[RMDB]
RNA sequence: GGGAACGACUCGAGUAGAGUCGAAAAUUGAUAGUUGAAUCGGAAGAACUGUCUAAAGUAGAUAACCAAAUUGGGGCUUCUAUUGGCAAAAUCAUUGAAAUUCUUCAAGGCCUCAACGAGACCAGCAUACUAUCACGUGAUUCGUCACGUGAUAGUAAAAAGAAACAACAACAACAAC
Reactivity to 2A3 in 0.01 (KOAc 150mM, MgCl2 10mM, bicine 150mM(pH8.5), 24C), signal-to-noise 2, nucleotides 027 to 126: u090u070g030a030u030a050g020u000u030g090a090a040u070c030g060g010a070a010g000a060a030c020u020g020u050c030u090a140a090a060g060u030a020g020a110u060a100a040c010c030a070a080a130u160u110g030g000g010g010c000u060u000c010u090a050u150u040g020g000c050a050a020a110a090u170c030a040u000u090g030a080a060a070u130u030c020u050u030c010a040a070g030g030c020c000u020c010a000a000c030g030a010g040a050c030c000a000g070c060a070
Reactivity to DMS in 0.01 (KOAc 150mM, MgCl2 10mM, bicine 150mM(pH8.5), 24C), signal-to-noise 3, nucleotides 027 to 126: u010u010g010a070u000a090g010u000u010g000a100a070u030c060g000g010a080a100g000a080a080c070u020g020u000c030u010a050a110a120g000u010a040g000a070u000a150a140c030c040a030a110a180u010u000g020g020g020g020c120u000u010c080u000a060u010u000g010g040c090a040a060a100a060u010c110a050u010u010g010a040a080a160u000u000c060u000u000c060a070a070g010g010c040c030u010c000a040a030c090g010a180g000a150c030c040a080g040c140a140
Chemical mapping of a 177-nucleotide RNA with 2A3 and DMS.
For 2A3, 1,789 sequencing reads were counted.
For DMS the reverse transcriptase was MarathonRT.
For 2A3 the reverse transcriptase was SuperScript II with manganese.
Source: RMDB library OK2TST, as collected in RNAgym.
Values are in units of 0.01, from 0 to 300, in steps of 10.
Reactivities are given for positions 27 through 126.
The reactions ran in a buffer of 150 mM KOAc, 10 mM MgCl2 and 150 mM bicine (pH 8.5), at 24 C.